[RMDB]
Chemical mapping of a 207-nucleotide RNA with DMS and 2A3. The DMS profile rests on 8,518 reads. 2A3 adducts were read by reverse transcription with SuperScript II with manganese. The RNA was probed in 150 mM KOAc, 10 mM MgCl2 and 150 mM bicine (pH 8.5) at 24 C. High 2A3 reactivity points to a flexible backbone, as in loops and unpaired stretches. Reactivities are given for positions 27 through 156.

RNA sequence: GGGAACGACUCGAGUAGAGUCGAAAAGAGUAUUCGUACUCCUGCUAGAUAUGGACGACCUGGAGCCCGUAUUACUCCCCACCGUUCUUCGGAAACGAAGAACGAGGUAAUACACUCCUCCCUGUCGUCCUAAGUCGAGUACCGCUUUCGAGCGGAACUUCAGUAUAAUCUUCGGAUUAUACUGAAGAAAAGAAACAACAACAACAAC
Reactivity to DMS in 0.01 (KOAc 150mM, MgCl2 10mM, bicine 150mM(pH8.5), 24C), signal-to-noise 3, nucleotides 027 to 156: g000a070g020u000a020u000u010c220g030u000a020c000u000c000c010u010g010c020u010a080g020a040u000a190u010g010g000a030c000g010a030c020c050u020g030g030a080g040c210c090c120g010u000a020u000u000a050c030u000c160c120c070c040a300c160c000g000u010u000c000u000u000c000g020g010a080a060a190c010g000a010a000g010a020a000c010g000a050g020g000u000a020a040u000a020c020a140c070u000c050c000u000c010c000c020u010g010u010c000g010u000c000c010u000a000a080g010u010c010g000a080g030u000a110c000c000g010c000u010u000u000c180g020a060g010c000g020g000a040a080
Reactivity to 2A3 in 0.01 (KOAc 150mM, MgCl2 10mM, bicine 150mM(pH8.5), 24C), signal-to-noise 9, nucleotides 027 to 156: g040a010g030u110a080u160u210c210g030u090a050c020u020c040c010u030g050c040u040a030g020a050u040a040u190g000g000a000c000g000a000c010c030u000g020g000a010g060c110c110c100g020u000a000u010u000a010c050u160c080c070c040c020a030c010c020g000u000u000c000u000u000c000g020g030a090a060a060c010g000a010a000g000a000a000c000g000a000g000g000u000a000a000u010a000c010a020c040u080c020c000u010c010c020c010u000g000u000c000g000u000c000c000u000a000a000g000u000c000g010a010g020u050a130c000c010g010c020u150u120u180c300g120a010g000c010g000g040a060a040